RNA sequence: GGGAACGACUCGAGUAGAGUCGAAAAAGAGUCUGCAUGGAUAGGCCUUACUGGCUUCCUCACCUGAGUGUAUCACCAUUAAUUAGAUGAUACCUCUUUGUCCAAUCACAUUUCUACAUGGCUGUCCCCAGUUUAAGGACAAAAACAGACAGUCUCAGGAUGCUAUAGUAUUCGUACUAUAGCAUCCAAAAGAAACAACAACAACAAC
Reactivity to 2A3 in 0.01 (KOAc 150mM, MgCl2 10mM, bicine 150mM(pH8.5), 24C), signal-to-noise 5, nucleotides 027 to 156: a010g060a010g020u010c020u050g060c090a100u120g020g040a080u070a180g030g040c020c020u120u170a150c130u130g010g000c000u100u040c000c010u050c030a090c010c070u050g020a000g010u220g010u010a000u010c010a010c030c000a040u080u230a150a110u170u130a200g080a110u040g000a010u000a000c000c010u000c000u050u050u050g030u000c030c000a060a090u160c060a060c040a160u130u200u110c080u140a130c040a130u150g030g000c000u010g030u100c000c000c030c000a000g000u010u030u110a080a060g010g000a020c030a020a050a000a010a010c000a010g050a010c010a000g050u050c020u010c070a050
Reactivity to DMS in 0.01 (KOAc 150mM, MgCl2 10mM, bicine 150mM(pH8.5), 24C), signal-to-noise 2, nucleotides 027 to 156: a060g030a130g020u000c000u000g050c050a100u000g020g010a140u010a100g040g040c020c010u000u000a130c150u010g020g000c010u000u000c010c020u000c020a000c130c090u000g020a040g040u010g080u020a010u000c000a020c010c000a240u010u000a100a290u010u000a080g040a000u000g010a040u000a020c010c010u020c020u000u000u000g000u000c000c000a090a180u010c080a060c060a150u000u010u010c110u000a080c060a060u020g000g010c030u020g010u000c010c000c000c030a230g020u020u000u000a100a100g000g010a100c020a020a050a040a080a030c050a060g010a060c000a090g000u000c030u000c030a300